Structure probing data (DMS and 2A3) for a 177-nucleotide construct. For DMS the reverse transcriptase was MarathonRT. The data come from the RNA Mapping Database (RMDB), library TTRDES.
RNA sequence: GGGAACGACUCGAGUAGAGUCGAAAAAAAGAUAUGGACACAAGGGAGUCUAAUCUUCUGAUGACCGAGUAUCGGAAACGAUACUCGCAAGGAAGGAUAGACGAAGAACUUGUGUCCUAAGUCAAAACGUUACUAACACGUUCGCGUGUUAGUAACGAAAAGAAACAACAACAACAAC
Reactivity to DMS in 0.01 (KOAc 150mM, MgCl2 10mM, bicine 150mM(pH8.5), 24C), signal-to-noise 2, nucleotides 027 to 126: a160a140a030g020a030u000a300u000g010g000a010c020a000c000a000a000g010g000g010a180g010u000c000u010a000a090u000c000u010u000c000u000g010a140u010g010a250c300c020g010a020g030u000a000u010c000g000g000a120a070a210c020g020a020u000a000c000u000c000g000c060a010a150g000g000a010a010g010g000a050u000a000g000a030c040g030a110a080g090a100a220c000u000u000g000u000g010u030c000c000u000a000a040g020u000c020a140a070a110a150
Reactivity to 2A3 in 0.01 (KOAc 150mM, MgCl2 10mM, bicine 150mM(pH8.5), 24C), signal-to-noise 2, nucleotides 027 to 126: a050a000a000g040a000u090a040u170g020g010a000c000a000c000a050a000g040g020g000a080g020u010c010u020a080a110u020c010u060u050c010u050g300a300u200g050a150c080c090g010a010g000u000a000u000c000g040g000a090a070a030c010g000a000u000a000c020u020c010g000c020a120a080g040g000a010a000g060g010a010u010a010g010a000c020g110a050a080g030a020a020c000u010u000g000u000g020u020c000c000u000a010a000g000u000c000a010a000a080a150